Description
Chemical mapping of a 177-nucleotide RNA with 2A3 and DMS. Values cover nucleotides 27 to 126.
RNA sequence: GGGAACGACUCGAGUAGAGUCGAAAAACUUUUAAGGCAAUGGAUGGAAAGUAUCAGCUGUUACACCCACCUUUGACAGUACUGCUUGUAAAGAUUGUGUACUAGAUUAGUAGUGUAUACUUCAGAACGCGAAUUUAAAAUUCGUUUUAAAUUCGCGAAAAGAAACAACAACAACAAC
Reactivity to 2A3 in 0.01 (KOAc 150mM, MgCl2 10mM, bicine 150mM(pH8.5), 24C), signal-to-noise 3, nucleotides 027 to 126: a000c030u140u110u030u100a120a060g040g000c030a020a050u090g070g030a020u040g000g020a150a050a040g020u050a050u110c020a050g050c020u040g030u100u020a020c020a040c010c020c000a040c020c000u040u040u030g020a020c030a010g030u040a040c000u020g070c010u090u090g130u210a060a040a030g040a060u110u150g040u000g000u040a010c010u010a000g040a090u050u020a020g060u010a010g010u040g040u050a050u040a080c020u040u050c020a040g040a140a020
Reactivity to DMS in 0.01 (KOAc 150mM, MgCl2 10mM, bicine 150mM(pH8.5), 24C), signal-to-noise 4, nucleotides 027 to 126: a070c050u010u000u000u010a070a090g010g000c050a080a060u010g000g020a060u000g010g000a080a080a070g000u000a050u000c110a090g010c030u000g010u000u000a080c100a070c040c040c010a080c140c040u000u000u000g010a180c130a030g010u000a030c030u010g020c020u000u000g020u010a070a070a070g010a050u000u000g020u010g010u000a010c020u000a040g000a150u010u010a030g010u000a070g010u000g010u000a040u010a050c100u000u000c060a090g020a110a200